The data come from the RNA Mapping Database (RMDB), library M2PK50. The record gives the reactivity of an RNA of 177 nucleotides to DMS and 2A3. 2A3 adducts were read by reverse transcription with SuperScript II with manganese. For 2A3, 1,199 sequencing reads were counted. The RNA was probed in 150 mM KOAc, 10 mM MgCl2 and 150 mM bicine (pH 8.5) at 24 C.

RNA sequence: GGGAACGACUCGAGUAGAGUCGAAAAGUGCGACAUUUCGAUGUCGCACAAACCCAAAUGGUGGCACCUAACUAAACAAGCCGGGAAAAGCCAGAUGGCAACGUCCUUAGCCCUUCGGGGCUAAGAAGCGACAAGAUACGUUCGCGUAUCUUGUCGCAAAAGAAACAACAACAACAAC
Reactivity to DMS in 0.01 (KOAc 150mM, MgCl2 10mM, bicine 150mM(pH8.5), 24C), signal-to-noise 1, nucleotides 027 to 126: g000u000g020c000g000a010c000a000u000u020u020c190g010a000u010g000u000c000g010c000a000c000a000a150a120c020c000c000a130a250a080u010g020g030u000g000g010c130a060c010c020u000a000a070c230u000a070a070a040c100a090a110g020c040c050g000g030g030a030a060a110a140g000c010c000a050g000a150u000g000g050c030a030a000c090g080u010c070c000u000u000a030g000c000c000c000u000u000c230g030g010g000g000c000u000a000a000g000a110a070
Reactivity to 2A3 in 0.01 (KOAc 150mM, MgCl2 10mM, bicine 150mM(pH8.5), 24C), signal-to-noise 2, nucleotides 027 to 126: g000u010g010c010g000a030c000a000u070u130u150c300g060a000u000g010u030c000g000c000a000c000a000a000a010c030c000c000a040a050a040u100g010g010u020g010g050c040a300c300c010u070a130a150c030u130a160a060a070c050a090a010g010c020c000g000g040g000a090a060a010a010g020c020c000a100g000a260u170g040g000c040a060a000c040g060u040c000c000u000u030a000g000c000c000c000u030u030c240g030g010g000g000c010u020a000a000g000a000a010